[RMDB]
RNA sequence: GGGAACGACUCGAGUAGAGUCGAAAAAUAACGAAUAGUGUACUUGAAAACUAUAUGCGUUAUGCUGAAAGAACACAGGUAUAUAGACAAGCAUCAUUAAUAAGAAGAAUGAUUGUAUUAUUACGAGUGCCAACCGUAUAUUCGUAUACGGUUGGCAAAAAGAAACAACAACAACAAC
Reactivity to 2A3 in 0.01 (KOAc 150mM, MgCl2 10mM, bicine 150mM(pH8.5), 24C), signal-to-noise 1, nucleotides 027 to 126: a000u220a010a000c070g020a000a000u000a170g010u020g000u070a020c010u000u260g000a210a210a030a030c080u000a000u050a030u110g020c000g030u020u020a080u300g010c140u050g000a000a220a000g070a250a000c230a000c000a180g000g020u010a090u100a000u000a010g120a070c000a040a040g020c000a000u030c000a000u070u210a170a230u150a070a000g050a160a000g000a030a000u060g000a020u000u130g080u030a000u080u080a020u080u000a080c080g010a000g200
Reactivity to DMS in 0.01 (KOAc 150mM, MgCl2 10mM, bicine 150mM(pH8.5), 24C), signal-to-noise 2, nucleotides 027 to 126: a070u010a000a060c070g000a170a020u000a040g040u000g000u030a010c080u050u000g000a050a080a060a080c000u010a000u020a060u000g010c000g010u020u030a010u010g000c050u010g000a040a120a100g000a110a110c150a110c130a030g010g000u000a070u020a070u010a070g000a080c050a070a110g020c000a030u000c020a020u020u000a050a110u010a080a070g040a110a070g010a020a050u000g000a100u000u000g010u010a090u000u010a050u020u000a040c110g000a180g000
An RNA of 177 nucleotides, treated with 2A3 and DMS and read out base by base.
The data come from the RNA Mapping Database (RMDB), library OK1LIB.
For 2A3 the reverse transcriptase was SuperScript II with manganese.
DMS (dimethyl sulfate) methylates the pairing face of unpaired adenines and cytosines.
DMS adducts were read by reverse transcription with MarathonRT.
The reactions ran in a buffer of 150 mM KOAc, 10 mM MgCl2 and 150 mM bicine (pH 8.5), at 24 C.